Source information: The data come from the RNA Mapping Database (RMDB), library M2PK90. An RNA of 177 nucleotides, treated with DMS and 2A3 and read out base by base. For 2A3 the reverse transcriptase was SuperScript II with manganese.
RNA sequence: GGGAACGACUCGAGUAGAGUCGAAAAAAUACGAGCGUAAUCGCGUCUUGACGUGAGUGGGCCUAGACUGUAGGCUAUAUAGCCCAAGUGUGCAUAGCGCACAAUACCCUGAUCUACAGUCAUUGAACUGCUGUGUAUCGUUCGCGAUACACAGCAGAAAAGAAACAACAACAACAAC
Reactivity to DMS in 0.01 (KOAc 150mM, MgCl2 10mM, bicine 150mM(pH8.5), 24C), signal-to-noise 1, nucleotides 027 to 126: a040a110u030a020c030g020a060g020c070g000u020a030a080u000c060g030c060g040u000c130u000u010g000a060c030g000u000g010a080g020u010g000g010g000c000c260u000a100g000a010c000u000g000u000a020g010g000c120u010a050u000a080u000a050g000c010c000c010a050a190g000u000g010u000g040c000a240u000a110g010c100g060c000a010c000a040a140u000a130c000c000c010u010g010a040u000c010u000a000c000a020g010u000c000a110u000u060g010a060a150
Reactivity to 2A3 in 0.01 (KOAc 150mM, MgCl2 10mM, bicine 150mM(pH8.5), 24C), signal-to-noise 2, nucleotides 027 to 126: a000a000u240a010c070g010a050g000c060g060u040a020a090u070c000g000c020g060u070c090u060u170g110a040c000g010u020g030a020g020u050g000g010g020c010c050u010a050g010a020c010u010g010u010a010g000g020c030u000a000u030a030u050a130g020c000c000c020a040a020g030u010g000u010g000c030a200u150a230g060c040g000c010a000c010a010a010u100a090c020c010c000u040g000a030u000c000u020a010c000a000g000u000c020a120u000u110g050a070a060